[RMDB]
This 177-nucleotide RNA was probed chemically with DMS and 2A3. The RNA was probed in 150 mM KOAc, 10 mM MgCl2 and 150 mM bicine (pH 8.5) at 24 C.

RNA sequence: GGGAACGACUCGAGUAGAGUCGAAAAUUGUAUGAGCCCUGGUUUCCGCCGAAGACGUUGAAGCUGCCGAGGUUGCCGCUGCCGAGGUUGAAGCUGCCGAUGUUCGCCAAGCCGGCGUUGCUGUCGCAAGUCAUACAUAUUUCGAUAUGUAUGACUUAAAAGAAACAACAACAACAAC
Reactivity to DMS in 0.01 (KOAc 150mM, MgCl2 10mM, bicine 150mM(pH8.5), 24C), signal-to-noise 9, nucleotides 027 to 126: u020u020g010u010a060u010g000a120g000c030c010c020u010g000g010u010u010u010c020c020g010c030c030g010a110a090g010a080c080g010u000u010g010a100a100g010c020u000g000c060c020g010a100g010g010u010u010g010c020c020g010c030u000g010c030c020g010a110g000g010u010u010g000a100a080g010c010u010g010c030c030g000a080u010g010u010u010c050g000c030c030a070a160g010c060c040g000g000c070g010u000u000g010c020u000g010u000c060g010c140
Reactivity to 2A3 in 0.01 (KOAc 150mM, MgCl2 10mM, bicine 150mM(pH8.5), 24C), signal-to-noise 6, nucleotides 027 to 126: u080u060g070u070a130u140g070a050g030c000c000c000u020g050g020u020u080u020c030c010g020c010c010g060a060a020g060a040c070g030u080u100g060a070a010g010c030u030g010c040c000g040a050g050g010u050u070g010c010c010g020c030u020g020c010c010g030a030g040g000u050u070g050a040a010g020c020u020g020c020c000g040a060u080g030u060u060c020g000c030c000a020a020g050c020c000g010g020c020g020u030u040g000c010u030g030u050c010g010c070
DMS adducts were read by reverse transcription with MarathonRT.